[RMDB]
RNA sequence: GGGAACGACUCGAGUAGAGUCGAAAAAGGGUGGAUUAGGCCAUCAGGAUGCCAAUUAAAUCUUCUGCCAAAACAUCAGUGCUGGUUCUCAACUCAGAAACAUGUUCAUACAUUUUGUUGGUGUCACAGUGAUGGGAGGGCUGGGAUGCUACUGGCCAUGAUAUACCUCUUUCGAGAGGUAUAUCAUAAAAGAAACAACAACAACAAC
Reactivity to 2A3 in 0.01 (KOAc 150mM, MgCl2 10mM, bicine 150mM(pH8.5), 24C), signal-to-noise 8, nucleotides 027 to 156: a000g070g000g010u080g020g010a100u080u150a090g050g010c020c010a030u050c020a020g090g010a030u050g020c020c010a030a030u120u140a050a060a060u040c050u210u050c060u130g060c020c020a070a070a020a030c010a030u060c030a020g060u020g060c050u020g040g020u120u020c120u040c110a030a030c030u050c120a030g060a040a100a020c050a040u050g020u140u150c050a030u120a180c020a040u040u060u040u120g030u010u020g000g010u020g010u010c020a030c020a080g050u020g050a040u040g020g020g010a070g050g040g000c030u050g010g000g020a010u050g030c010u030a050c060u040g030g010c010c010
Reactivity to DMS in 0.01 (KOAc 150mM, MgCl2 10mM, bicine 150mM(pH8.5), 24C), signal-to-noise 4, nucleotides 027 to 156: a090g020g000g040u000g000g000a160u000u000a100g010g000c010c020a050u000c010a100g010g010a090u010g020c010c020a040a110u010u010a020a060a080u000c040u000u000c060u010g020c010c040a050a090a080a110c060a060u000c050a090g030u000g020c040u000g020g000u000u000c040u010c050a050a100c050u000c040a080g010a140a090a100c070a030u000g010u000u010c090a150u000a080c070a050u010u000u000u000g010u000u000g030g020u000g010u000c030a060c070a100g020u000g010a090u000g010g020g000a160g010g010g020c050u000g020g010g000a130u000g010c060u000a070c040u000g000g000c040c080
About this RNA: This 207-nucleotide RNA was probed chemically with 2A3 and DMS. The reactions ran in a buffer of 150 mM KOAc, 10 mM MgCl2 and 150 mM bicine (pH 8.5), at 24 C. It was measured as part of the RMDB library OK3TST.